[RMDB]
RNA sequence: GGGAACGACUCGAGUAGAGUCGAAAAGCGCUGGAAGUGGCAAGUACUAUGCUCUGAAUGUUCCACUUCGUGAUGGAGUCGAUGACGUCACUUAUGAACGGAUUUUCAGAACAAUUAUGGGAGAAGAUAAUUAAUGGGUGUUCGCACCCAUUAAUUAAAAAGAAACAACAACAACAAC
Reactivity to 2A3 in 0.01 (KOAc 150mM, MgCl2 10mM, bicine 150mM(pH8.5), 24C), signal-to-noise 4, nucleotides 027 to 126: g030c060g000c040u050g050g040a120a020g020u080g050g030c020a030a020g000u010a050c060u050a070u110g030c000u000c020u010g030a060a030u080g050u120u000c010c020a020c030u030u030c020g030u020g020a030u040g020g040a070g050u050c060g050a090u150g060a020c000g030u000c010a000c000u110u110a110u210g040a120a030c030g020g020a010u020u020u040u020c020a020g040a070a010c020a080a110u150u100a070u180g040g030g010a070g000a080a020g040a080
Reactivity to DMS in 0.01 (KOAc 150mM, MgCl2 10mM, bicine 150mM(pH8.5), 24C), signal-to-noise 7, nucleotides 027 to 126: g020c100g010c040u010g010g010a050a060g030u000g000g010c070a070a100g010u010a070c100u010a110u000g030c030u000c010u010g010a030a030u010g010u000u000c010c020a120c100u000u000c060g000u000g010a030u000g010g010a080g000u000c150g010a110u010g000a120c020g000u000c010a020c040u000u000a040u010g020a090a080c200g000g000a050u000u000u000u000c010a030g010a040a040c040a040a090u010u010a070u010g000g000g010a100g000a080a080g000a140
Source: RMDB library OK2TST, as collected in RNAgym. Structure probing data (2A3 and DMS) for a 177-nucleotide construct. DMS adducts were read by reverse transcription with MarathonRT. The reactions ran in a buffer of 150 mM KOAc, 10 mM MgCl2 and 150 mM bicine (pH 8.5), at 24 C. For DMS, 11,963 sequencing reads were counted. Values are in units of 0.01, from 0 to 300, in steps of 10. 2A3 adducts were read by reverse transcription with SuperScript II with manganese.